[RMDB]
RNA sequence: GGGAACGACUCGAGUAGAGUCGAAAAUUGGAAGAAAACUCCUGUGUUCUCCUCUCAGCAGAGCACAGGUGACAAGAGUGAGAACUUGUGGUUGAAAUGGAAAUGAGGAAGGAGUAGAAGGAAAAAGUCUUCCCCACUUGUUCGCAAGUGGGGAAGAAAAAGAAACAACAACAACAAC
Reactivity to DMS in 0.01 (KOAc 150mM, MgCl2 10mM, bicine 150mM(pH8.5), 24C), signal-to-noise 1, nucleotides 027 to 126: u020u010g010g020a070a080g000a130a060a130a230c050u000c000c000u000g000u000g030u000u020c000u000c100c070u010c220u020c200a110g040c270a050g010a010g010c000a000c010a030g000g050u010g000a050c070a100a050g000a080g000u020g010a080g010a060a120c050u000u000g030u000g040g000u000u000g000a030a100a040u000g010g000a010a050a040u000g000a190g000g000a070a030g010g010a030g000u010a050g000a120a050g010g020a040a070a100a140a110g000

The data come from the RNA Mapping Database (RMDB), library OK2TST. This 177-nucleotide RNA was probed chemically with DMS. DMS adducts were read by reverse transcription with MarathonRT. The DMS profile rests on 693 reads.